Conditions: 150 mM KOAc, 10 mM MgCl2 and 150 mM bicine (pH 8.5), 24 C. Chemical mapping of a 177-nucleotide RNA with 2A3. For 2A3, 623 sequencing reads were counted.
RNA sequence: GGGAACGACUCGAGUAGAGUCGAAAAGUGGUCGAGUCCGAAGGACUGGGGUAGCGAAAUAAAGAGAGAGAGAGCUACCCCGUCUGUCAGUCACUCUCUGUCUGACUCUCUCUCUCAAAGACCACAAGACCAGUCCUGGUUUCGACCAGGACUGGUCAAAAGAAACAACAACAACAAC
Reactivity to 2A3 in 0.01 (KOAc 150mM, MgCl2 10mM, bicine 150mM(pH8.5), 24C), signal-to-noise 1, nucleotides 027 to 126: g140u070g030g030u020c070g000a000g020u020c020c080g050a170a190g120g060a040c070u120g000g000g000g010u040a000g010c090g210a060a000a130u170a000a300a030g030a000g000a000g000a000g000a000g000a020g020c000u000a000c000c100c000c000g010u060c000u010g020u000c000a000g000u000c040a200c110u120c020u010c060u070g010u000c020u030g000a000c000u040c000u000c000u000c020u010c000u000c000a120a000a000g060a010c000c000a050c000a000a060